This 207-nucleotide RNA was probed chemically with DMS and 2A3.
DMS adducts were read by reverse transcription with MarathonRT.
For 2A3 the reverse transcriptase was SuperScript II with manganese.
The reactions ran in a buffer of 150 mM KOAc, 10 mM MgCl2 and 150 mM bicine (pH 8.5), at 24 C.

[RMDB]
RNA sequence: GGGAACGACUCGAGUAGAGUCGAAAAACCCCAGAAACCAUUCCUUCUACCUUGAGUAUUGCUGAAUUCAGUUUAGCGUGCAUGCUCUUGGCUAUUCUCAUAGUGAUUGUCAAAUUUGGAGUUACUUAAAACACGACACCCUUCGGGGUGUCGUGAAGUAAUGUAAGUGGUUCGCCACUUACAUUACAAAAGAAACAACAACAACAAC
Reactivity to DMS in 0.01 (KOAc 150mM, MgCl2 10mM, bicine 150mM(pH8.5), 24C), signal-to-noise 1, nucleotides 027 to 156: a060c050c010c000c040a150g000a140a120a030c040c000a070u000u000c010c000u000u000c070u000a080c020c000u000u000g030a060g030u000a060u000u010g000c030u010g000a120a070u000u000c130a170g000u000u000u000a060g010c020g020u010g010c070a180u000g000c000u020c030u000u020g010g000c000u000a100u000u000c020u020c010a140u000a050g020u000g000a040u000u000g010u000c000a110a070a160u000u000u010g010g000a290g000u000u000a110c050u000u000a040a090a100a230c020a000c000g000a000c000a000c010c000c000u000u000c300g060g000g050g030u000g000u000c000g000u010g000a000a060
Reactivity to 2A3 in 0.01 (KOAc 150mM, MgCl2 10mM, bicine 150mM(pH8.5), 24C), signal-to-noise 3, nucleotides 027 to 156: a000c040c000c010c000a040g130a070a080a000c050c000a110u060u100c030c000u110u110c000u070a080c010c000u030u000g010a030g020u050a060u160u160g020c030u000g090a150a100u110u190c060a070g160u060u050u170a050g040c050g030u050g050c020a010u040g040c000u000c000u030u010g020g000c000u050a040u150u080c060u010c060a070u110a060g080u070g080a130u080u150g100u090c060a080a100a160u160u060u110g050g000a060g020u000u030a070c020u040u150a080a030a040a000c000a000c010g020a000c010a020c010c010c000u050u080c200g050g010g000g000u000g010u000c000g000u000g000a000a000